The record gives the reactivity of an RNA of 177 nucleotides to DMS and 2A3.
[RMDB]
RNA sequence: GGGAACGACUCGAGUAGAGUCGAAAACAUCGCUCAUUAAAGGCGAUGCCCCUAAAGCUAACAAACCAUUAGCCACAAAUUGCGCCACCACAUAAUUGGUGAUAUUAUGCACUAAGGGGCGUUUUUGUCCAUUUCAUGCGUUCGCGCAUGAAAUGGAAAAAGAAACAACAACAACAAC
Reactivity to DMS in 0.01 (KOAc 150mM, MgCl2 10mM, bicine 150mM(pH8.5), 24C), signal-to-noise 1, nucleotides 027 to 126: c030a010u000c000g030c000u000c070a200u000u010a160a130a300g000g000c000g030a010u000g000c070c000c010c070u000a090a090a180g000c020u000a000a080c090a080a060a100c120c090a290u000u020a010g000c000c160a170c050a000a020a030u000u000g000c010g000c010c000a050c000c040a090c020a050u000a040a130u000u000g010g000u000g000a130u000a050u000u000a010u040g000c080a070c200u010a120a060g000g000g000g000c010g020u000u000u010u000u000g010
Reactivity to 2A3 in 0.01 (KOAc 150mM, MgCl2 10mM, bicine 150mM(pH8.5), 24C), signal-to-noise 2, nucleotides 027 to 126: c010a000u010c010g010c010u120c050a270u090u300a260a080a000g010g010c010g000a000u010g000c010c030c010c000u160a240a070a010g010c010u010a000a010c070a270a070a000c000c010a050u010u030a010g030c020c020a110c030a070a120a040u120u140g010c000g010c000c000a250c010c000a040c050a100u300a200a100u110u040g000g020u050g060a000u000a040u080u090a090u130g020c000a000c060u050a070a110g030g000g000g000c060g010u000u000u000u000u060g000
2A3 adducts were read by reverse transcription with SuperScript II with manganese. The 2A3 profile rests on 963 reads. The DMS profile rests on 723 reads. It was measured as part of the RMDB library OK2TST.